[RMDB]
RNA sequence: GGGAACGACUCGAGUAGAGUCGAAAACAGGGUGGCCUCCCAGCACCUAGCCUUGUGCGCCCGGAGCUCUGUGUGCACGGCAGACCUCUCUGCUGCCGCCAGCCGCUGCUUUUGGACCCCAGGGAGGUGCAUAUCAACUAUUCGUAGUUGAUAUGCAAAAAGAAACAACAACAACAAC
Reactivity to DMS in 0.01 (KOAc 150mM, MgCl2 10mM, bicine 150mM(pH8.5), 24C), signal-to-noise 7, nucleotides 027 to 126: c100a100g000g010g020u000g010g010c030c030u000c010c010c010a230g010c070a040c080c060u010a130g020c030c030u010u010g010u000g010c090g010c020c010c030g000g000a070g000c050u000c090u000g010u000g020u010g030c100a150c020g000g000c010a020g010a080c070c060u000c090u000c040u000g010c020u000g000c020c010g010c120c100a130g020c020c030g000c040u000g000c030u000u000u000u000g030g000a110c030c020c040c040a080g010g000g000a030g010g020
Reactivity to 2A3 in 0.01 (KOAc 150mM, MgCl2 10mM, bicine 150mM(pH8.5), 24C), signal-to-noise 4, nucleotides 027 to 126: c030a010g020g010g030u030g060g050c010c010u000c010c000c000a010g070c020a050c000c040u030a040g020c010c020u050u100g030u030g040c040g020c020c000c000g020g020a020g000c050u050c140u160g030u010g060u110g040c040a000c010g020g000c000a010g030a100c020c030u110c010u050c100u170g030c010u010g000c010c010g040c040c010a040g020c010c010g030c040u060g010c000u060u040u050u110g070g030a090c000c000c010c020a020g010g000g000a020g020g000